This 177-nucleotide RNA was probed chemically with 2A3 and DMS.
It was measured as part of the RMDB library M2PK50.
The RNA was probed in 150 mM KOAc, 10 mM MgCl2 and 150 mM bicine (pH 8.5) at 24 C.
RNA sequence: GGGAACGACUCGAGUAGAGUCGAAAAGCUGUCAGCUUCGGCUGACAGCAAACGCUCAUCUCAUGGAGCGCAAGACGAAUAGCAACAUAUUCGACAUGAGAAAAAGCUGCGCGUUCGCGCGCAGCAAUCAAAGAGUGUUGUUCGCAACACUCUUUGAAAAAGAAACAACAACAACAAC
Reactivity to 2A3 in 0.01 (KOAc 150mM, MgCl2 10mM, bicine 150mM(pH8.5), 24C), signal-to-noise 2, nucleotides 027 to 126: g010c000u000g020u010c020a000g010c000u040u080c160g110g010c000u000g000a000c000a000g010c010a010a000a010c000g000c000u000c000a070u010c000u000c020a010u000g010g000a010g000c010g010c180a090a030g110a050c010g010a010a010u020a020g090c110a070a170c030a180u060a020u040u010c010g020a010c000a000u010g000a010g000a080a010a000a000a000g000c000u010g000c020g010c010g010u040u080c260g010c000g000c000g000c070a000g000c010a000a040
Reactivity to DMS in 0.01 (KOAc 150mM, MgCl2 10mM, bicine 150mM(pH8.5), 24C), signal-to-noise 3, nucleotides 027 to 126: g010c020u000g000u000c000a000g010c010u000u030c250g050g000c010u000g000a020c020a000g010c000a020a050a130c010g010c000u000c000a100u010c000u000c000a010u000g000g000a000g010c000g020c140a100a050g020a050c010g010a030a030u000a010g000c040a140a120c140a150u000a010u000u000c010g010a160c010a010u000g000a010g000a050a170a120a100a140g000c010u000g000c010g000c000g010u000u010c190g020c010g030c000g020c000a000g010c000a020a020